[RMDB]
About this RNA:
The record gives the reactivity of an RNA of 207 nucleotides to 2A3 and DMS. For 2A3, 3,304 sequencing reads were counted. It was measured as part of the RMDB library RNAMAK. 2A3 is a SHAPE reagent: it acylates the 2'-hydroxyl of flexible nucleotides of all four kinds. The reactions ran in a buffer of 150 mM KOAc, 10 mM MgCl2 and 150 mM bicine (pH 8.5), at 24 C. DMS adducts were read by reverse transcription with MarathonRT. For 2A3 the reverse transcriptase was SuperScript II with manganese.

RNA sequence: GGGAACGACUCGAGUAGAGUCGAAAAGGAGCUUCGGCUCCAGCAACUCCUAAGUCUGCCGUCCUAUGAAGAGCUUUGUCAGCUCUAUCGGAAACGAUAGAGCUUGGAUUUAAGCUUGGAGGACUGCAGAUAUGGAAUAACACGUCUUCGGACGUAAUUCUUAACAGAACUUCGGUUCUGUUAAGAAAAAAGAAACAACAACAACAAC
Reactivity to 2A3 in 0.01 (KOAc 150mM, MgCl2 10mM, bicine 150mM(pH8.5), 24C), signal-to-noise 3, nucleotides 027 to 156: g000g000a000g020c040u090u090c230g140g000c000u010c010c000a000g030c020a020a120c040u020c000c000u020a070a070g030u000c000u000g020c020c030g000u000c000c000u280a300u190g030a020a030g010a010g010c000u010u010u020g010u010c000a000g020c000u000c000u010a000u000c010g000g050a090a060a050c020g000a010u000a010g000a000g000c010u010u050g020g000a020u260u120u140a000a000g000c000u010u000g010g010a000g000g000a000c000u000g000c000a000g000a000u010a000u020g000g020a020a060u140a180a080c090a010c050g010u000c010u060u060c210g080g010a000c000g000u030a000a080
Reactivity to DMS in 0.01 (KOAc 150mM, MgCl2 10mM, bicine 150mM(pH8.5), 24C), signal-to-noise 2, nucleotides 027 to 156: g000g010a010g050c010u000u010c300g050g000c000u000c000c010a020g010c040a090a120c050u000c010c010u010a070a300g010u000c010u000g040c000c040g000u000c000c000u000a180u010g010a190a300g010a000g000c000u010u010u000g000u010c010a060g010c010u000c000u000a010u000c000g000g010a200a110a280c000g010a000u000a020g010a000g030c010u000u000g020g010a040u010u010u000a010a040g020c010u000u000g000g010a010g010g010a030c000u010g000c000a000g040a010u010a120u000g000g010a060a030u010a070a120c110a070c010g010u000c000u000u000c300g030g000a010c010g020u000a030a110